[RMDB]
RNA sequence: GGGAACGACUCGAGUAGAGUCGAAAAGCGUGGCUGGCGAACCACCGAUUCCUUACAGAUUGUCACUCAAGCCGACUGAGAUCGAUAGUGCUAAGGAACUGCAUGUGGGACAAUCUUAUAGCUCACAGACUAUUACCUCAUUCGUGAGGUAAUAGUCAAAAGAAACAACAACAACAAC
Reactivity to DMS in 0.01 (KOAc 150mM, MgCl2 10mM, bicine 150mM(pH8.5), 24C), signal-to-noise 7, nucleotides 027 to 126: g010c150g030u000g010g010c020u000g000g010c160g000a110a280c010c000a020c040c040g010a160u010u000c000c000u000u020a070c210a030g000a070u000u000g000u000c010a070c010u000c030a040a100g030c070c050g000a110c040u000g000a040g000a080u010c090g010a110u010a040g020u020g000c070u000a050a100g020g030a090a070c110u020g000c060a100u010g000u000g000g000g000a060c040a040a040u000c040u020u020a100u020a100g010c040u010c120a050c180a150
Reactivity to 2A3 in 0.01 (KOAc 150mM, MgCl2 10mM, bicine 150mM(pH8.5), 24C), signal-to-noise 9, nucleotides 027 to 126: g120c110g010u020g010g000c020u030g030g020c050g050a090a050c010c000a010c010c010g030a120u010u030c000c000u020u070a040c020a030g070a080u030u030g010u010c010a020c040u020c020a050a090g050c040c020g080a080c040u090g070a020g070a230u120c080g050a060u090a110g100u110g050c040u060a050a060g060g030a130a070c030u060g020c040a090u110g010u030g030g010g020a020c010a020a020u010c000u050u150a170u070a060g010c010u040c080a080c030a040